[RMDB]
RNA sequence: GGGAACGACUCGAGUAGAGUCGAAAAAACUUCGGGAGAAGGGGUGCCCCCGCGUACGUGAACCGGCUCGCCCGGGGAGCGGAGGGGGGCCGCAGUGAAGAGGCCCAAGCGACUGUUUACCAAAAACUCAAACUAGAAGAUUCGUCUUCUAGUUUGAAAAAGAAACAACAACAACAAC
Reactivity to 2A3 in 0.01 (KOAc 150mM, MgCl2 10mM, bicine 150mM(pH8.5), 24C), signal-to-noise 8, nucleotides 027 to 126: a000a010c070u080u020c070g030g030g020a110g040a080a020g050g030g010g050u140g060c000c000c010c000c000g050c030g050u090a030c000g020u030g010a030a010c000c000g010g010c070u140c190g090c040c000c000g000g000g000g040a010g000c020g010g010a060g010g000g000g000g000g000c000c000g000c010a050g020u070g070a090a030g020a070g060g040c000c020c020a010a010g050c040g050a060c030u030g030u070u060u120a120c040c020a030a040a030a030a090c030
Reactivity to DMS in 0.01 (KOAc 150mM, MgCl2 10mM, bicine 150mM(pH8.5), 24C), signal-to-noise 5, nucleotides 027 to 126: a080a040c020u000u000c030g010g010g000a140g020a060a050g010g000g000g010u020g030c040c000c000c000c000g070c130g010u000a070c010g020u010g000a300a300c000c010g000g010c030u080c280g020c200c000c020g000g000g000g000a300g000c030g000g000a150g000g020g000g010g000g030c020c050g000c090a040g010u020g000a090a070g010a070g000g020c020c020c030a070a110g020c080g000a070c070u000g000u000u000u010a140c060c050a060a050a070a080a090c180